Source: RMDB library OK2TST, as collected in RNAgym.
Structure probing data (2A3 and DMS) for a 177-nucleotide construct.

RNA sequence: GGGAACGACUCGAGUAGAGUCGAAAAGAGCUCAACCAUACCGGACGGUUCGGGCUUCAAGUUCAAUUGGUGCUCCAGAUAGAACAGCUGCUGGUAGAACUUCGCCUUCCUCGCUGCCGUUCAUAACGUACUACAGUCCAUUCGUGGACUGUAGUACAAAAGAAACAACAACAACAAC
Reactivity to 2A3 in 0.01 (KOAc 150mM, MgCl2 10mM, bicine 150mM(pH8.5), 24C), signal-to-noise 3, nucleotides 027 to 126: g030a010g010c000u020c040a020a010c040c000a050u110a180c030c100g110g070a060c070g010g070u040u080c040g050g000g000c000u050u050c030a010a020g000u070u070c040a060a070u070u040g060g000u060g020c000u010c010c010a040g070a190u130a050g070a120a030c010a020g030c040u080g010c020u040g070g000u040a060g030a100a030c010u060u050c020g020c010c010u040u040c020c000u030c020g010c050u040g030c030c020g040u030u010c030a070u110a140a040c090
Reactivity to DMS in 0.01 (KOAc 150mM, MgCl2 10mM, bicine 150mM(pH8.5), 24C), signal-to-noise 3, nucleotides 027 to 126: g000a050g010c010u000c000a040a060c010c010a240u010a110c140c130g000g020a150c210g000g000u000u010c180g010g000g000c010u000u000c100a010a030g000u010u000c030a100a130u010u010g020g020u000g010c050u010c040c040a090g000a080u000a100g010a060a080c080a090g010c030u010g020c010u000g010g030u000a090g000a070a040c030u000u000c030g010c080c020u000u000c040c010u000c060g020c060u000g020c010c020g020u000u000c030a050u010a060a110c200